Chemical mapping of a 177-nucleotide RNA with DMS.
It was measured as part of the RMDB library TTRDEL.
For DMS the reverse transcriptase was MarathonRT.
In probing experiments dimethyl sulfate is read out at A N1 and C N3, which are open when not base-paired.
The reactions ran in a buffer of 150 mM KOAc, 10 mM MgCl2 and 150 mM bicine (pH 8.5), at 24 C.

[RMDB]
RNA sequence: GGGAACGACUCGAGUAGAGUCGAAAAGAUAUGGAGUCCUGACAUGCGAGUGUUCGGAAACGAACACAUCGCAACAGCAGGCUCCUAAGUCAAAAGGAUAUCGACACCUUCGGGUGUCGAUAUCCAAGUGCAUACUUGACUUCGGUCAAGUAUGCACAAAAGAAACAACAACAACAAC
Reactivity to DMS in 0.01 (KOAc 150mM, MgCl2 10mM, bicine 150mM(pH8.5), 24C), signal-to-noise 1, nucleotides 027 to 126: g000a040u010a300u010g000g000a020g000u020c030c000u000g000a210c070a300u000g020c000g030a030g050u000g020u000u000c030g070g000a110a020a150c000g000a000a000c000a040c000a070u000c000g000c000a000a040c300a200g020c060a020g000g020c000u000c000c000u000a010a080g000u000c020a070a040a140a300g010g000a000u000a000u000c020g000a020c000a010c000c000u000u010c180g010g030g020u000g000u000c000g000a000u000a000u000c000c000a000a030